Chemical mapping of a 177-nucleotide RNA with 2A3 and DMS.
[RMDB]
RNA sequence: GGGAACGACUCGAGUAGAGUCGAAAAGUUGUAAGGUUCGCCUUACAACAAAAUAAAACAGGCUAGUACCCGCCUGAAAAAGGUACGAAGAUCGAAAGAUCAAAAGACACUUGUUCGCAAGUGUCAACUAUGUCGUAUAGUUCGCUAUACGACAUAGAAAAGAAACAACAACAACAAC
Reactivity to 2A3 in 0.01 (KOAc 150mM, MgCl2 10mM, bicine 150mM(pH8.5), 24C), signal-to-noise 6, nucleotides 027 to 126: g000u000u010g000u010a010a000g010g020u020u100c200g110c020c000u000u000a000c000a000a000c000a010a040a000a010u080a010a060a010a030c090a010g000g000c010u060a040g020u010a010c000c010c040g010c010c020u030g130a070a010a000a010a000g010g000u010a010c020g040a190a030g000a010u020c010g030a070a030a040g000a000u010c040a050a080a000a060g000a000c000a000c010u020u010g020u090u110c230g020c080a000a000g000u000g000u000c000a010a010
Reactivity to DMS in 0.01 (KOAc 150mM, MgCl2 10mM, bicine 150mM(pH8.5), 24C), signal-to-noise 5, nucleotides 027 to 126: g010u000u000g010u000a010a000g000g020u000u010c240g020c000c000u000u000a000c000a010a000c000a020a070a080a060u010a090a070a120a170c190a010g000g000c010u010a110g000u000a020c010c010c240g000c000c000u000g010a020a020a060a100a030g010g010u000a000c010g000a110a100g000a000u000c010g010a090a070a120g000a010u000c000a080a050a090a110g010a010c000a010c000u000u000g010u000u010c210g010c010a000a010g010u000g010u000c000a040a100
The data come from the RNA Mapping Database (RMDB), library M2PK50. The RNA was probed in 150 mM KOAc, 10 mM MgCl2 and 150 mM bicine (pH 8.5) at 24 C.